[RMDB]
RNA sequence: GGGAACGACUCGAGUAGAGUCGAAAAGCUUUCCGUUUCGACGGAAAGCAAAGGCAAGUACAUGAGAGAUCAAAGUUCACUCAGAAAAGCCGUACUAAAGAAAAAUCAAUCUGUUCGCAGAUUGAAAGACUGCACAGUAAUUCGUUACUGUGCAGUCAAAAGAAACAACAACAACAAC
Reactivity to 2A3 in 0.01 (KOAc 150mM, MgCl2 10mM, bicine 150mM(pH8.5), 24C), signal-to-noise 1, nucleotides 027 to 126: g010c020u000u010u000c010c000g000u080u010u150c290g140a040c000g010g010a000a000a000g010c010a040a000a020g000g000c040a050a000g080u040a080c100a170u120g000a000g000a000g030a010u090c110a250a110a050g020u060u020c000a020c010u050c000a000g050a040a050a050a020g020c040c030g040u030a070c080u150a120a100a060g090a050a070a010a010a000u010c000a010a000u000c000u010g060u030u030c280g000c110a010g000a010u010u000g010a000a020a000
Reactivity to DMS in 0.01 (KOAc 150mM, MgCl2 10mM, bicine 150mM(pH8.5), 24C), signal-to-noise 1, nucleotides 027 to 126: g030c000u000u010u010c000c000g010u020u000u040c180g010a020c000g020g000a030a010a000g000c000a000a000a060g030g010c010a050a020g000u000a150c050a100u000g000a030g030a150g000a020u000c050a100a060a210g000u000u000c020a110c000u010c000a090g000a030a160a080a270g000c020c020g000u020a120c110u000a070a110a120g040a050a090a030a130a160u010c010a020a000u000c020u010g000u000u030c230g010c010a000g000a000u000u000g010a000a060a160
This 177-nucleotide RNA was probed chemically with 2A3 and DMS.
The 2A3 profile rests on 1,220 reads.
For 2A3 the reverse transcriptase was SuperScript II with manganese.
The DMS profile rests on 855 reads.